The record gives the reactivity of an RNA of 177 nucleotides to 2A3 and DMS.
[RMDB]
RNA sequence: GGGAACGACUCGAGUAGAGUCGAAAAUUUGGUAUCUAGCACAGCCGGUGGCUAGGACGAAAGUUGCUCGAGGAAAAGUGCUUGCUUUUACGCUGUCUUUCGUAUUUGCUGCCCUUUUCUCAAAGCCCAGAAGACAAUCCUUCGGGAUUGUCUUCUGAAAAGAAACAACAACAACAAC
Reactivity to 2A3 in 0.01 (KOAc 150mM, MgCl2 10mM, bicine 150mM(pH8.5), 24C), signal-to-noise 5, nucleotides 027 to 126: u110u050u060g140g020u090a140u080c000u000a010g030c000a040c080a120g200c110c120g260g050u130g070g000c000u010a000g020g020a010c030g080a070a020a070g090u170u120g060c040u040c080g050a100g010g050a000a000a000a000g010u000g030c070u110u160g010c000u000u020u030u000a020c010g010c100u070g150u300c100u140u240u100c010g010u020a030u000u020u010g000c000u000g000c010c020c000u000u000u000u020c030u010c000a060a000a010g000c000c020
Reactivity to DMS in 0.01 (KOAc 150mM, MgCl2 10mM, bicine 150mM(pH8.5), 24C), signal-to-noise 2, nucleotides 027 to 126: u010u010u000g000g030u020a000u000c010u000a000g020c000a050c080a190g000c090c100g000g000u020g000g010c000u000a030g000g000a000c050g000a040a050a070g030u030u020g040c030u010c060g000a300g020g000a000a000a030a030g020u010g000c020u010u060g040c000u000u000u000u000a010c010g020c300u020g010u050c150u030u000u000c000g020u000a010u000u000u000g000c000u000g000c030c060c000u000u020u000u030c000u010c050a080a050a050g030c070c110
The DMS profile rests on 2,871 reads.
For 2A3, 3,010 sequencing reads were counted.
For 2A3 the reverse transcriptase was SuperScript II with manganese.
Reactivities are given for positions 27 through 126.